[RMDB]
RNA sequence: GGGAACGACUCGAGUAGAGUCGAAAAGGGUGCCCUAUCCGAGCACUGCUGCUUCGGUAGAAAGGCUAAGCACGUCGCAAUGACGUAAGGUGGGACUUUUCCCUCGGGUUUGAGCGGUCGAACCCAGCAUCCAAUAAUCGUUCGCGAUUAUUGGAUGAAAAGAAACAACAACAACAAC
Reactivity to DMS in 0.01 (KOAc 150mM, MgCl2 10mM, bicine 150mM(pH8.5), 24C), signal-to-noise 5, nucleotides 027 to 126: g010g000g020u000g010c020c020c010u000a070u000c000c030g030a060g000c010a060c190u000g010c160u000g010c020u000u000c120g030g000u000a030g000a070a100a090g000g010c020u000a050a150g020c190a040c010g010u000c010g000c170a100a110u010g000a010c010g000u000a040a110g010g010u000g010g000g000a110c070u000u010u000u010c000c020c010u000c110g020g000g000u000u000u000g000a050g010c190g000g010u000c010g000a010a100c000c000c000a150g010
Reactivity to 2A3 in 0.01 (KOAc 150mM, MgCl2 10mM, bicine 150mM(pH8.5), 24C), signal-to-noise 6, nucleotides 027 to 126: g030g030g030u100g120c020c000c010u020a060u070c010c010g000a010g000c010a040c190u250g070c070u030g010c000u150u140c070g030g000u010a010g050a050a040a000g040g000c030u040a050a020g100c060a020c010g000u000c010g020c200a240a300u300g010a010c010g020u010a000a050g060g020u080g020g020g020a030c010u060u020u030u040c000c000c000u010c040g010g020g000u010u030u070g040a050g020c100g030g110u040c010g000a000a000c010c000c000a000g030

An RNA of 177 nucleotides, treated with DMS and 2A3 and read out base by base. 2A3 adducts were read by reverse transcription with SuperScript II with manganese. The 2A3 profile rests on 8,842 reads.